RNA sequence: GGGAACGACUCGAGUAGAGUCGAAAAUGAAUGAAUAAACUGGGGAUGCCACUGCUUUAUGCUUGUCCUGUGGCUUCAUGAGGUUGAGUAUGUGGCCAGCCCUGUAUGCCAAUUUGUAUGCCAGAUGGUCCCAUUCUUAUUCUAUGUCCAAAGCCCACUCAGUGCUAAUAUUCGUAUUAGCACUGAGAAAAGAAACAACAACAACAAC
Reactivity to DMS in 0.01 (KOAc 150mM, MgCl2 10mM, bicine 150mM(pH8.5), 24C), signal-to-noise 2, nucleotides 027 to 156: u020g030a130a100u000g010a080a070u000a050a100a110c060u000g010g020g050g020a130u000g050c000c010a080c020u000g000c040u020u000u010a060u020g000c050u010u000g020u000c030c150u010g010u010g030g030c020u000u000c060a050u010g000a070g020g020u000u010g000a090g030u000a050u000g030u000g000g000c020c030a050g010c030c040c020u010g000u010a040u000g030c010c050a050a170u000u000u000g020u000a060u000g020c060c070a070g010a150u000g010g000u000c010c000c010a090u000u000c080u010u000a100u000u000c010u000a140u000g000u000c050c040a050a110a120g010c010c000c010a170
Reactivity to 2A3 in 0.01 (KOAc 150mM, MgCl2 10mM, bicine 150mM(pH8.5), 24C), signal-to-noise 6, nucleotides 027 to 156: u080g030a050a020u050g010a020a020u030a050a060a030c060u040g000g000g010g050a130u130g020c010c000a010c020u010g050c030u070u190u150a080u160g030c050u100u120g080u170c030c100u130g030u080g090g000c000u020u010c060a080u100g030a080g090g020u020u050g030a080g040u080a110u300g130u130g130g020c000c010a010g010c000c000c000u000g000u040a030u080g010c010c010a040a030u090u100u160g050u040a040u110g030c070c050a060g040a150u020g010g050u230c010c000c000a010u040u030c040u020u030a030u050u010c040u060a080u120g090u020c040c020a110a030a010g030c030c000c030a010
Chemical mapping of a 207-nucleotide RNA with DMS and 2A3. Reactivities are given for positions 27 through 156. For DMS the reverse transcriptase was MarathonRT. The reactions ran in a buffer of 150 mM KOAc, 10 mM MgCl2 and 150 mM bicine (pH 8.5), at 24 C.